[RMDB]
RNA sequence: GGGAACGACUCGAGUAGAGUCGAAAACCGAGGUAGGGGAAGCGUGUCGGUGCAGGCUGGAGACCACCGUUAAGCGUCGCGGCAACCAAUUAAGCGCCGAUUCCAAUCAGCGCGACUACGCCCUCGCUGCCUGAUCAGCGACGGCUAGCUGUCGGCCCACAUUUGACUACUUCGGUAGUCAAAUGUGAAAAGAAACAACAACAACAAC
Reactivity to 2A3 in 0.01 (KOAc 150mM, MgCl2 10mM, bicine 150mM(pH8.5), 24C), signal-to-noise 7, nucleotides 027 to 156: c010c020g020a050g040g040u070a040g010g000g010g030a020a030g040c050g040u060g070u120c020g000g010u020g010c020a010g010g000c010u010g010g000a010g000a010c000c010a000c020c020g100u090u300a010a000g000c010g020u010c000g000c000g010g000c000a000a040c020c030a060a100u200u170a110a050g010c020g010c050c010g040a030u220u150c090c060a070a090u060c030a050g020c020g000c010g060a010c010u070a020c080g000c000c000c000u000c000g010c000u010g010c020c100u190g040a240u160c000a000g000c010g000a010c010g000g000c000u000a020g000c040u060g030u070c010g020g020c010c010
Reactivity to DMS in 0.01 (KOAc 150mM, MgCl2 10mM, bicine 150mM(pH8.5), 24C), signal-to-noise 2, nucleotides 027 to 156: c010c010g000a060g000g030u010a010g010g030g020g010a070a060g050c070g030u010g000u020c040g030g030u000g020c010a100g020g020c010u000g000g030a150g000a060c040c010a060c020c030g000u000u000a060a050g010c110g010u010c020g030c010g020g010c040a090a120c260c090a070a130u000u010a060a150g030c010g030c010c020g030a060u000u030c170c160a100a120u000c040a040g000c040g010c020g000a070c060u000a040c070g010c040c000c020u000c020g040c010u000g010c110c020u000g010a050u000c020a010g020c000g020a040c070g010g000c000u000a040g000c000u000g020u000c040g000g000c050c050
Structure probing data (2A3 and DMS) for a 207-nucleotide construct.
For DMS the reverse transcriptase was MarathonRT.
For 2A3, 9,023 sequencing reads were counted.
Source: RMDB library RSTRND, as collected in RNAgym.
Values cover nucleotides 27 to 156.